[RMDB]
RNA sequence: GGGAACGACUCGAGUAGAGUCGAAAAGACACGACGGAGACGUCGUGUCAAGUCCAGUGCGAAAGCACUGGACAAAUAAGGGCCGUUUUUCUCGCUGACUUUCAGCCCCAAAUGAAAAAUGUCAGCAAUUAAUUUAGCAGUUCGCUGCUAAAUUAAUAAAAGAAACAACAACAACAAC
Reactivity to DMS in 0.01 (KOAc 150mM, MgCl2 10mM, bicine 150mM(pH8.5), 24C), signal-to-noise 3, nucleotides 027 to 126: g020a000c000a010c000g020a040c000g000g010a270g000a240c010g020u010c000g010u000g000u000c000a030a070g000u000c000c000a020g010u000g010c000g000a130a080a140g010c000a010c000u000g010g010a000c000a010a040a080u030a130a130g020g010g020c030c040g010u010u000u000u020u000c080u020c140g020c000u000g010a020c010u000u000u000c000a030g010c050c000c010c110a050a050a080u000g000a010a050a010a120a070u000g010u000c010a000g020c000a230
Reactivity to 2A3 in 0.01 (KOAc 150mM, MgCl2 10mM, bicine 150mM(pH8.5), 24C), signal-to-noise 1, nucleotides 027 to 126: g000a010c000a000c000g000a000c000g020g000a060g030a040c000g000u000c000g000u000g000u010c000a000a000g000u010c000c000a000g000u000g000c010g090a140a050a030g010c000a010c010u000g000g020a000c000a000a020a000u110a060a080g000g000g020c010c030g000u000u000u020u090u050c070u030c080g000c000u000g000a010c030u030u030u020c010a020g010c000c000c010c010a070a130a040u050g030a010a000a020a020a020u170g000u000c010a000g000c000a000